[RMDB]
RNA sequence: GGGAACGACUCGAGUAGAGUCGAAAAGUACUGUGACCACCAAGCCCCACCUCCAGCUCCCACUUCCUCCCUCAGAAUUUCCGGCUGUGUUCUGGAUGGCUCUUCAGGGUACCUGGAGUUCACAUGACCGUAAUAAAUGCUUCGGCAUUUAUUACGGAAAAGAAACAACAACAACAAC
Reactivity to DMS in 0.01 (KOAc 150mM, MgCl2 10mM, bicine 150mM(pH8.5), 24C), signal-to-noise 3, nucleotides 027 to 126: g000u000a070c090u010g020u010g000a090c080c030a090c070c040a100a150g000c090c020c010c050a100c140c010u010c030c040a080g000c080u000c020c020c010a170c120u000u000c010c020u000c020c000c020u010c050a100g000a080a080u000u010u000c050c020g020g030c070u000g020u010g020u010u000c010u000g010g000a070u000g010g000c050u000c030u000u000c050a040g010g000g010u000a090c070c020u000g000g000a040g000u000u000c020a080c070a070u010g010a230